RNA sequence: GGGAACGACUCGAGUAGAGUCGAAAACUUGUAAGCAAGGAAUACAAUUAGUUUUACUCCCUUUUUGCUAAUUGUAAACUUCCUUAAAAUCCUAAACUCCCUUUUUUGGACCGACUUGAUUGUCGGUGCUUGUCAGAAAUUUCGAUUUCUGACAAGCAAAAGAAACAACAACAACAAC
Reactivity to 2A3 in 0.01 (KOAc 150mM, MgCl2 10mM, bicine 150mM(pH8.5), 24C), signal-to-noise 8, nucleotides 027 to 126: c040u070u120g070u170a030a020g050c070a010a010g020g020a050a040u030a010c000a000a010u020u010a010g020u010u040u050u130a090c030u130c020c010c020u020u030u000u030u050g000c010u000a000a000u000u000g000u010a050a030a060c020u020u030c000c000u010u020a040a100a020a080u050c020c020u040a050a060a040c050u080c000c000c000u050u080u040u020u070u120g110g030a020c000c000g000a010c020u050u100g120a120u150u170g090u000c000g000g000u000
Reactivity to DMS in 0.01 (KOAc 150mM, MgCl2 10mM, bicine 150mM(pH8.5), 24C), signal-to-noise 2, nucleotides 027 to 126: c150u010u000g000u010a080a070g010c230a030a020g000g000a110a140u000a000c000a000a000u000u000a000g000u000u010u030u000a070c050u030c010c000c040u000u000u010u000u030g010c000u000a020a010u010u000g000u000a050a060a230c120u010u000c080c020u000u000a040a060a070a050u000c010c020u000a020a130a220c120u010c000c000c000u000u010u000u010u010u050g000g000a070c000c000g010a010c010u010u000g010a170u040u000g000u000c010g000g000u000
An RNA of 177 nucleotides, treated with 2A3 and DMS and read out base by base.
It was measured as part of the RMDB libraries RFM100 and RFMREP.
Conditions: 150 mM KOAc, 10 mM MgCl2 and 150 mM bicine (pH 8.5), 24 C.